RNA sequence: GGGAACGACUCGAGUAGAGUCGAAAAUGAGACUGUGUGAUUGGGUUUUGGGCAACGUUUGUUGGUGCCAACAUUUGUUGGCCGCCUCUCGGCAACGUUUGUUGGCGAGGACCCUUGAGACUGCGUGGCUGGGUGUCCAGUUCGCUGGACACCCAGCAAAAGAAACAACAACAACAAC
Reactivity to 2A3 in 0.01 (KOAc 150mM, MgCl2 10mM, bicine 150mM(pH8.5), 24C), signal-to-noise 2, nucleotides 027 to 126: u110g020a070g080a220c060u070g000u000g030u040g220a030u000u100g020g020g010u010u000u150u060g080g000g000c000a000a020c050g120u090u030u170g030u000u210g150g070u090g030c000c000a000a000c040a100u260u200u260g000u010u030g010g000c000c000g000c030c040u000c060u040c000g110g090c010a000a010c040g020u050u130u300g040u200u000g040g080c070g000a010g020g010a010c000c000c000u000u000g040a040g000a060c010u020g000c000g070u070g130

The data come from the RNA Mapping Database (RMDB), library OK1LIB.
This 177-nucleotide RNA was probed chemically with 2A3.
The 2A3 profile rests on 682 reads.
Reactivities are rounded to 0.1 and cut off at 0 and 3.